[RMDB]
RNA sequence: GGGAACGACUCGAGUAGAGUCGAAAACUCGAGGUGUGCGAGAGGCCCUUCCUCGGCCCCAAAGCCGUCUGCCGGGCUAAGGCGUGCAGAGCAGGCGAGGACAGCCGCCGCCCCUACCGCCGCAGAGCAAUUUGCGUUUAUUCGUAAACGCAAAUUGAAAAGAAACAACAACAACAAC
Reactivity to 2A3 in 0.01 (KOAc 150mM, MgCl2 10mM, bicine 150mM(pH8.5), 24C), signal-to-noise 2, nucleotides 027 to 126: c030u030c020g030a040g040g030u090g010u100g030c030g030a100g000a070g200g000c030c010c000u050u070c030c020u060c000g250g060c010c010c000c020a030a140a020g030c010c010g040u030c020u020g020c030c040g090g030g020c070u070a070a060g090g010c030g060u200g000c020a010g020a030g110c050a030g050g020c010g020a040g010g040a030c040a030g020c010c020g030c010c010g020c000c010c000c000u040a100c000c020g040c030c000g000c060a030g010a010g070
Reactivity to DMS in 0.01 (KOAc 150mM, MgCl2 10mM, bicine 150mM(pH8.5), 24C), signal-to-noise 6, nucleotides 027 to 126: c040u000c010g000a100g010g020u000g010u000g030c030g010a130g000a100g000g010c010c060c050u010u010c020c020u010c020g000g030c020c030c040c060a060a190a160g010c020c020g010u000c020u010g000c020c070g010g010g000c080u010a110a090g010g000c020g010u020g020c040a050g000a280g020c140a100g010g010c020g000a120g000g000a080c300a100g000c050c020g020c060c010g000c030c000c010c020u010a080c070c040g000c040c030g000c090a110g010a090g000